[RMDB]
RNA sequence: GGGAACGACUCGAGUAGAGUCGAAAAUGCUGGGGAUACCAAUAUGAAUCAGAGGUGUGCCCUGAUUUAUGGAGCUCAGGGUAAAGUGUGAGAAAGAAAAAAUUAUGGUACAGUGUGAGAGUAGAGGUUCCUUGCAAAGAGCUUUGCGAAUGUAUAAGAGUAUAAUCAUGUUCGCAUGAUUAUACUCAAAAGAAACAACAACAACAAC
Reactivity to DMS in 0.01 (KOAc 150mM, MgCl2 10mM, bicine 150mM(pH8.5), 24C), signal-to-noise 3, nucleotides 027 to 156: u000g030c040u010g010g010g010g020a170u010a100c070c040a090a160u000a120u000g010a050a070u000c020a020g020a120g030g030u010g040u010g010c010c030c030u000g020a050u000u010u010a070u020g020g000a180g030c140u000c020a080g010g020g020u000a030a040a100g020u010g010u010g000a110g000a060a020a130g040a020a030a070a080a090a040u010u010a050u000g010g020u000a040c040a070g010u000g050u000g000a090g020a140g000u000a060g020a080g000g010u000u000c030c020u010u000g030c050a050a080a110g010a070g020c080u010u000u010g020c020g000a080a060u000g010u000a110u010a120a300
Reactivity to 2A3 in 0.01 (KOAc 150mM, MgCl2 10mM, bicine 150mM(pH8.5), 24C), signal-to-noise 5, nucleotides 027 to 156: u110g000c020u050g010g010g010g030a040u070a100c020c040a050a040u150a070u190g080a070a030u070c050a020g070a060g100g020u030g020u060g060c000c010c000u000g000a010u000u080u080a170u130g070g010a030g030c010u010c040a030g000g030g020u050a070a090a040g030u060g030u060g070a060g080a030a060a010g070a030a030a030a050a040a010u190u140a110u140g010g000u030a030c030a050g030u020g000u030g080a040g000a010g030u070a020g010a030g050g000u040u040c020c000u020u040g010c010a010a060a040g070a040g030c020u070u050u040g010c030g040a090a030u150g060u160a060u130a250a090
Source: RMDB library OK3TST, as collected in RNAgym.
Structure probing data (DMS and 2A3) for a 207-nucleotide construct.
For DMS the reverse transcriptase was MarathonRT.
2A3 adducts were read by reverse transcription with SuperScript II with manganese.
The RNA was probed in 150 mM KOAc, 10 mM MgCl2 and 150 mM bicine (pH 8.5) at 24 C.
The DMS profile rests on 5,717 reads.
Values cover nucleotides 27 to 156.